[RMDB]
RNA sequence: GGGAACGACUCGAGUAGAGUCGAAAAGGGGUCCACGAUGAGGGAGCGGUCACACGUCACUACCCACCCUGAAGCCUCCACGGGAGGUGACGUUAAGCGCUCCCGAGUGGACGGAGGCACCCAAACAAGUUAGAUGAGUUCGCUCAUCUAACUUGAACAUUGUUUCCUAGUUCGCUAGGAAACAAUGAAAAGAAACAACAACAACAAC
Reactivity to 2A3 in 0.01 (KOAc 150mM, MgCl2 10mM, bicine 150mM(pH8.5), 24C), signal-to-noise 6, nucleotides 027 to 156: g010g000g010g010u000c010c010a010c010g170a210u280g110a250g020g010g000a010g010c040g070g300u300c100a040c010a000c060g030u030c010a030c010u180a240c000c000c000a010c010c000c010u010g040a050a010g010c000c000u000c010c010a040c070g000g010g010a110g000g020u010g000a000c000g010u040u080a300a070g180c010g000c020u020c000c000c000g000a000g000u000g000g000a000c010g000g000a000g000g000c000a010c000c000c000a020a040a010c000a000a010g000u000u010a010g000a000u010g010a000g040u070u130c230g110c140u000c000a000u000c000u000a000a000c000u000u000g000a020a000
Reactivity to DMS in 0.01 (KOAc 150mM, MgCl2 10mM, bicine 150mM(pH8.5), 24C), signal-to-noise 2, nucleotides 027 to 156: g030g010g020g030u000c000c010a070c020g000a130u000g030a240g000g020g000a050g050c010g020g010u000c070a130c060a060c010g060u000c010a020c010u000a300c040c020c000a300c020c030c010u000g000a120a140g030c050c000u000c020c010a290c250g020g000g020a300g050g000u000g020a030c020g000u000u000a090a150g030c000g000c000u000c000c000c000g000a000g000u000g000g000a080c000g030g000a030g070g000c000a100c000c020c010a110a100a140c020a000a030g050u000u000a000g000a000u000g010a010g030u000u010c300g000c010u000c000a030u000c000u000a000a000c000u000u000g010a190a280